[RMDB]
RNA sequence: GGGAACGACUCGAGUAGAGUCGAAAAUCAAAAGAAUGCAUUGAGAAAGGAAAGAGAGAGUAAGUGGACAGACGAGAGAAGGAAUGCUGAGAAAAGGCGUAGAUACAAUUCUUGGCUAAAAAGAAAGUACGGAAUAUCAAUAGAUGACUAUGAGUCCAGGUCUAUUUAUAUUCGUAUAAAUAGACCUAAAAGAAACAACAACAACAAC
Reactivity to 2A3 in 0.01 (KOAc 150mM, MgCl2 10mM, bicine 150mM(pH8.5), 24C), signal-to-noise 4, nucleotides 027 to 156: u080c010a040a020a030a010g090a050a050u080g040c050a040u070u120g040a040g030a090a040a010g030g020a030a060a010g050a000g010a000g000a000g030u040a080a030g030u060g050g020a030c040a030g030a010c020g030a030g000a000g000a090a020g020g000a090a030u090g000c020u020g020a010g040a040a030a020a020g030g010c030g010u030a050g010a090u130a100c040a020a020u050u000c010u010u020g010g000c010u080a070a100a010a000a000g060a040a060a000g030u030a030c040g020g050a070a050u100a040u110c020a070a010u050a100g090a060u100g020a050c010u070a040u210g040a040g040u040c010c050
Reactivity to DMS in 0.01 (KOAc 150mM, MgCl2 10mM, bicine 150mM(pH8.5), 24C), signal-to-noise 3, nucleotides 027 to 156: u010c020a070a040a070a080g020a100a050u000g000c030a100u000u000g020a120g000a070a100a090g030g000a070a120a070g010a050g020a080g010a060g010u000a050a090g020u000g010g020a060c030a050g030a060c040g010a110g020a080g010a070a080g040g000a080a090u000g020c020u000g010a070g000a090a130a100a150g020g050c040g030u000a060g010a130u000a040c060a040a230u010u000c010u000u000g020g040c040u010a020a030a040a060a070g000a060a020a070g000u010a090c050g030g010a030a050u010a100u000c050a010a090u000a080g010a070u000g010a120c050u000a120u010g000a070g010u010c040c130